This 177-nucleotide RNA was probed chemically with 2A3 and DMS.
RNA sequence: GGGAACGACUCGAGUAGAGUCGAAAAAAGGACUGGUUCGCCAGUCCUUAUUCAUUCGUACGCAACGAAGCGUAUGUCAUUACGCAAAUGACUAAAAGCGUAUACGAAAGGACUUCGGUCCUUUCAAUGUGAAAUAGUCUUUCGAGACUAUUUCACAAAAAGAAACAACAACAACAAC
Reactivity to 2A3 in 0.01 (KOAc 150mM, MgCl2 10mM, bicine 150mM(pH8.5), 24C), signal-to-noise 3, nucleotides 027 to 126: a000a000g010g000a010c010u010g020g050u040u050c090g020c040c000a000g000u000c000c000u000u010a000u000u020c000a000u020u000c020g030u010a010c010g000c050a140a060c150g190a120a040g000c000g010u010a020u030g130u040c040a070u060u060a000c010g000c020a050a120a140u110g070a100c060u170a020a080a040a000g000c000g010u010a030u010a060c090g000a000a000a000g000g000a000c000u040u090c270g080g010u000c000c000u000u000u010c000a000a000
Reactivity to DMS in 0.01 (KOAc 150mM, MgCl2 10mM, bicine 150mM(pH8.5), 24C), signal-to-noise 5, nucleotides 027 to 126: a010a010g000g010a010c000u010g000g010u000u010c220g010c000c010a010g010u000c000c000u000u000a010u000u000c060a150u010u010c080g010u000a010c000g010c010a110a110c190g000a130a150g000c020g020u010a020u010g000u000c110a070u010u000a030c060g000c060a060a080a040u010g010a100c160u000a030a070a060a120g010c010g010u000a050u000a120c210g010a010a000a000g000g000a010c000u000u010c190g020g000u000c000c000u000u000u000c000a040a100
Source: RMDB library M2PK50, as collected in RNAgym. The DMS profile rests on 5,818 reads.